[RMDB]
RNA sequence: GGGAACGACUCGAGUAGAGUCGAAAAGCUCCAGGCAAGAGUCCUGGCUGUGGAAAGAUACCUACAGGAUCAACAGCUCCUGGGGAUUUGGGGCUGCUCUGGAAAACUCAUCUGCACCACUGCUGUGCAUCAUUAGAAGUUUCGACUUCUAAUGAUGAAAAGAAACAACAACAACAAC
Reactivity to DMS in 0.01 (KOAc 150mM, MgCl2 10mM, bicine 150mM(pH8.5), 24C), signal-to-noise 9, nucleotides 027 to 126: g000c060u010c010c020a030g000g010c070a170a110g010a160g010u020c010c010u000g010g010c110u010g000u010g010g000a100a130a080g000a090u020a090c060c020u010a110c050a040g000g010a070u020c060a090a120c090a060g010c050u000c010c010u010g010g010g010g010a130u010u010u010g010g000g010g010c020u000g000c030u010c020u000g010g000a060a050a080a090c090u010c100a040u010c030u000g010c070a130c010c020a070c090u010g010c040u010g010u010g000
Reactivity to 2A3 in 0.01 (KOAc 150mM, MgCl2 10mM, bicine 150mM(pH8.5), 24C), signal-to-noise 9, nucleotides 027 to 126: g030c020u010c010c010a010g020g000c040a110a150g030a040g190u110c000c000u020g030g000c050u060g010u060g040g050a120a090a050g090a060u180a170c000c010u040a090c030a040g030g020a060u080c030a050a160c010a040g010c010u010c010c010u050g010g030g070g050a060u150u090u120g020g000g000g000c000u020g010c010u010c010u030g030g020a030a060a030a030c030u040c030a060u020c020u030g000c030a020c010c000a050c060u070g010c040u050g030u050g050
Structure probing data (DMS and 2A3) for a 177-nucleotide construct. High DMS reactivity at an A or C suggests that its Watson-Crick edge is free. The RNA was probed in 150 mM KOAc, 10 mM MgCl2 and 150 mM bicine (pH 8.5) at 24 C.